[RMDB]
An RNA of 177 nucleotides, treated with DMS and read out base by base.
RNA sequence: GGGAACGACUCGAGUAGAGUCGAAAAUAGAAGUGGCCAAGACCAUCCUACCCGAAGUUGUGGACGUGGCCUCCACUUCGAAGGGAAAUAGGAAGUUGAAAGGGAAAGAAGUCAGAGAAGCACAAGGCUUCACGGAGAGGUUCGCCUCUCCGUGAAGAAAAGAAACAACAACAACAAC
Reactivity to DMS in 0.01 (KOAc 150mM, MgCl2 10mM, bicine 150mM(pH8.5), 24C), signal-to-noise 2, nucleotides 027 to 126: u000a090g010a090a030g010u000g000g020c140c050a090a160g000a060c000c070a060u000c030c020u000a070c030c010c000g020a130a250g010u000u000g040u010g000g000a050c160g040u000g040g000c130c020u000c000c020a000c000u000u000c010g020a060a260g000g000g000a030a000a070u000a000g000g000a020a050g000u000u000g010a080a110a140g000g000g000a010a020a070g000a080a070g020u000c120a070g000a080g030a050a020g000c040a060c110a120a100g000g000
Background:
Reactivities are given for positions 27 through 126. The reactions ran in a buffer of 150 mM KOAc, 10 mM MgCl2 and 150 mM bicine (pH 8.5), at 24 C. Source: RMDB library OK2TST, as collected in RNAgym. The DMS profile rests on 950 reads.